[RMDB]
RNA sequence: GGGAACGACUCGAGUAGAGUCGAAAAGCCGCCGUCAGGACCGACACGUCAUUGGCAGCAGGGGGUAACACCCCCGUCGUCGGGGCACAGACGGCUGUGUUCCGAGCACUCACGGCGGUACCGAUCGCAUAUCCGAGCGGUUCGCCGCUCGGAUAUGAAAAGAAACAACAACAACAAC
Reactivity to DMS in 0.01 (KOAc 150mM, MgCl2 10mM, bicine 150mM(pH8.5), 24C), signal-to-noise 7, nucleotides 027 to 126: g010c010c010g020c010c020g030u000c160a050g010g000a130c300c040g010a030c070a110c150g010u000c070a130u020u010g020g010c070a140g010c110a190g000g000g000g010g010u000a100a120c120a300c010c000c000c000c010g000u010c060g010u000c010g000g010g000g020c030a040c010a020g020a230c260g010g010c010u010g010u000g000u000u000c000c000g020a070g010c130a160c040u010c140a050c030g010g010c000g020g010u000a080c010c020g010a070u020c160g010
Reactivity to 2A3 in 0.01 (KOAc 150mM, MgCl2 10mM, bicine 150mM(pH8.5), 24C), signal-to-noise 4, nucleotides 027 to 126: g020c000c010g000c000c010g020u000c010a010g030g050a090c030c010g040a030c020a020c080g060u060c080a230u100u300g080g010c030a020g010c060a040g020g010g010g000g000u010a040a000c030a220c160c000c000c010c000g010u000c000g020u000c000g000g010g020g010c010a010c000a030g190a150c210g170g060c030u000g000u000g000u000u000c000c000g010a020g010c030a030c030u030c010a010c010g000g010c000g030g000u040a030c010c010g040a130u150c110g000
Chemical mapping of a 177-nucleotide RNA with DMS and 2A3.
The reactions ran in a buffer of 150 mM KOAc, 10 mM MgCl2 and 150 mM bicine (pH 8.5), at 24 C.
Reactivities are given for positions 27 through 126.